[RMDB]
Source: RMDB library OK2TRN, as collected in RNAgym. The record gives the reactivity of an RNA of 177 nucleotides to DMS and 2A3. As a SHAPE reagent, 2A3 marks flexible, mostly unpaired nucleotides at the ribose 2'-OH.
RNA sequence: GGGAACGACUCGAGUAGAGUCGAAAAGCCGCAUAAUGACAGGCAACGAUGGGCGAAUAAGUCUUGCCUGCUACGGAAGACGUGUUGACGAUCCAGCCGCGGCGCGCCUCGACCAUUCCAGGCGUUAUAGCUGAUCAUAGUUCGCUAUGAUCAGCUAAAAAGAAACAACAACAACAAC
Reactivity to DMS in 0.01 (KOAc 150mM, MgCl2 10mM, bicine 150mM(pH8.5), 24C), signal-to-noise 4, nucleotides 027 to 126: g010c010c000g000c020a090u000a090a100u000g010a120c040a020g000g000c010a010a020c220g000a060u010g020g030g030c080g000a060a050u010a080a200g020u000c010u000u000g000c000c000u000g000c030u010a070c150g030g010a180a070g020a110c030g020u020g010u010u010g020a100c040g000a090u000c020c020a090g020c110c080g010c020g020g000c010g000c050g010c020c020u000c240g010a070c100c110a100u000u000c050c090a060g030g000c020g020u010u010a080
Reactivity to 2A3 in 0.01 (KOAc 150mM, MgCl2 10mM, bicine 150mM(pH8.5), 24C), signal-to-noise 3, nucleotides 027 to 126: g000c000c030g000c060a040u120a170a170u210g080a050c020a010g000g010c010a030a000c110g050a040u080g040g180g020c150g030a100a100u290a300a020g010u000c000u020u010g000c000c000u010g000c030u060a050c060g050g050a030a030g250a080c010g010u150g110u230u280g130a040c010g020a080u000c010c060a000g160c070c030g000c030g010g000c000g040c000g000c010c010u060c050g060a080c030c060a030u060u050c010c020a010g010g000c020g000u000u110a130

For DMS the reverse transcriptase was MarathonRT. The reactions ran in a buffer of 150 mM KOAc, 10 mM MgCl2 and 150 mM bicine (pH 8.5), at 24 C. Reactivities are given for positions 27 through 126.